[RMDB]
RNA sequence: GGGAACGACUCGAGUAGAGUCGAAAAGCUGGUCCGGGUUGGCCCCAGCGAACACUUGACGAACGGUUAGUCCCGUCUUGUGGAUUAGGACGUUCUAGGUCCGGUCUGUCCCCUAGUUCGUCCGAAACAUAUGGCGGUCGUUCGCGACCGCCAUAUGAAAAGAAACAACAACAACAAC
Reactivity to DMS in 0.01 (KOAc 150mM, MgCl2 10mM, bicine 150mM(pH8.5), 24C), signal-to-noise 1, nucleotides 027 to 126: g020c070u020g050g030u000c050c020g020g000g000u000u040g020g060c000c040c000c020a130g000c040g000a120a170c080a030c030u000u000g000a060c000g030a180a030c140g000g010u030u060a100g000u000c120c020c030g000u000c100u060u000g010u000g000g020a110u010u030a080g000g000a000c000g010u020u010c000u000a080g000g020u030c070c070g000g000u000c130u040g030u030c000c030c000c000u010a000g000u000u000c000g030u000c000c070g000a030a080a110
Reactivity to 2A3 in 0.01 (KOAc 150mM, MgCl2 10mM, bicine 150mM(pH8.5), 24C), signal-to-noise 2, nucleotides 027 to 126: g000c040u010g000g030u000c010c020g140g150g060u060u120g040g030c010c010c000c050a000g000c000g040a120a000c030a000c000u020u050g010a000c000g040a180a040c050g070g080u120u270a080g170u250c030c020c000g040u000c000u000u020g000u010g000g000a030u020u080a070g000g000a000c000g000u000u010c000u000a000g000g000u040c040c010g010g000u070c180u160g300u270c000c000c000c000u030a000g020u000u000c000g000u000c000c010g030a010a000a000